An RNA of 207 nucleotides, treated with 2A3 and DMS and read out base by base. 2A3 adducts were read by reverse transcription with SuperScript II with manganese. It was measured as part of the RMDB library OK3TST. For DMS, 11,740 sequencing reads were counted. The reactions ran in a buffer of 150 mM KOAc, 10 mM MgCl2 and 150 mM bicine (pH 8.5), at 24 C.
RNA sequence: GGGAACGACUCGAGUAGAGUCGAAAAGGACUUUGGAUUCAUGGAGAUGAUUACUCCAUGAACUUUCAGCCAAUUACAGCACAUGAACUGUAUCUUUUGCCACAGCAAGUUCUCACAGAAGAAGUGGAACUGCUGACGGAAGUGUGCAACCGAAUGACGAUUUAGUAUGAUUCGUCAUACUAAAUCGAAAAGAAACAACAACAACAAC
Reactivity to 2A3 in 0.01 (KOAc 150mM, MgCl2 10mM, bicine 150mM(pH8.5), 24C), signal-to-noise 9, nucleotides 027 to 156: g040g010a100c070u130u140u120g020g020a080u070u000c000a000u000g030g000a010g020a050u210g060a120u190u280a090c000u000c000c000a010u020g000a000a000c000u020u090u050c040a020g010c010c000a030a040u170u090a080c060a050g030c020a010c020a060u070g140a300a080c060u080g080u150a130u200c110u050u210u160u220g090c050c040a050c000a020g000c010a120a130g000u010u000c230u130c050a020c010a020g300a300a030g080a240a010g170u010g000g000a000a000c000u000g000c000u010g020a030c040g010g020a030a060g020u020g000u000g010c030a050a040c050c040g090a140a130u170g080a080
Reactivity to DMS in 0.01 (KOAc 150mM, MgCl2 10mM, bicine 150mM(pH8.5), 24C), signal-to-noise 4, nucleotides 027 to 156: g020g000a020c020u000u000u000g030g010a040u000u010c000a000u010g000g010a030g000a150u010g030a300u000u000a170c010u000c000c000a010u020g010a010a010c010u000u000u000c230a050g020c020c010a080a160u000u000a070c050a050g000c020a070c090a170u010g000a060a070c010u010g000u000a060u000c070u000u000u000u000g010c000c040a140c030a060g010c020a040a090g020u000u000c010u010c030a060c040a200g010a120a190g000a130a210g010u000g020g000a020a040c000u000g010c020u000g020a040c070g020g000a050a090g010u000g010u000g010c050a090a120c010c020g000a110a110u010g020a300